RNA sequence: GGGAACGACUCGAGUAGAGUCGAAAAAUUUGAUUUAGUUCAACACUUGUUUCAGAAGGAGGCUCAUCAUAUUCAGAGUAAACAAGUGAUACUUCCUUGCCAUCUUAAAUUUUUUAUUCAUUAAGAACCCAUGGUCAUACUUCGGUAUGACCAUGGGAAAAGAAACAACAACAACAAC
Reactivity to 2A3 in 0.01 (KOAc 150mM, MgCl2 10mM, bicine 150mM(pH8.5), 24C), signal-to-noise 2, nucleotides 027 to 126: a000u060u000u060g050a110u150u120u070a240g300u100u040c010a040a000c000a000c000u020u000g000u120u060u080c100a160g120a070a050g190g060a060g100g000c110u010c050a110u050c010a020u160a080u190u110c050a080g040a010g140u190a060a040a000c010a010a000g010u010g030a000u060a060c020u050u040c000c000u020u090g020c120c000a110u040c040u230u090a140a190a130u250u040u090u050u050u090a300u170u170c090a120u070u290a120a100g020a020a050